[RMDB]
RNA sequence: GGGAACGACUCGAGUAGAGUCGAAAACCAAUGGGAAACCAUUGGCAACUCGGAAACGAGUUGAACUCGGAAUUAGCUAAGAAACGAGCGACAAUGCGAUUUUAAGCAUUGUCGAUUACGCCCAUGUCGAUUUUAAGACAUGGAGCGAACUUAGCAAGCAUCGUGCACCGUUCGCGGUGUAUGAUGCAAAAGAAACAACAACAACAAC
Reactivity to DMS in 0.01 (KOAc 150mM, MgCl2 10mM, bicine 150mM(pH8.5), 24C), signal-to-noise 3, nucleotides 027 to 156: c000c000a030a000u020g010g000g000a170a120a240c000c000a030u000u000g000g010c000a040a050c020u000c000g000g010a160a120a230c030g020a070g040u000u000g010a050a300c020u000c040g000g000a110a130u000u000a170g020c000u000a000a000g010a080a100a090c090g010a120g010c030g030a010c010a010a010u000g020c000g000a230u000u000u010u000a120a300g020c000a010u000u010g000u000c010g000a010u000u000a060c000g030c000c000c000a010u000g040u000c000g010a230u010u010u010u000a060a180g000a030c020a020u010g000g020a050g040c010g000a070a150c020u000u000a000g010c010a190a190
Reactivity to 2A3 in 0.01 (KOAc 150mM, MgCl2 10mM, bicine 150mM(pH8.5), 24C), signal-to-noise 6, nucleotides 027 to 156: c000c000a000a000u010g000g000g010a050a030a030c000c000a000u000u000g000g000c010a010a000c000u000c000g000g030a060a060a050c010g000a000g000u010u000g010a050a030c010u000c000g010g030a170a100u140u060a120g000c000u000a000a000g010a020a120a010c040g010a020g030c000g000a000c000a000a000u000g000c030g140a170u010u070u110u300a120a010g000c000a000u000u000g000u000c000g000a000u000u010a010c000g000c010c000c000a000u000g000u000c020g040a110u030u080u100u300a090a020g000a000c000a000u000g000g010a010g000c000g000a000a020c000u000u000a000g000c010a000a010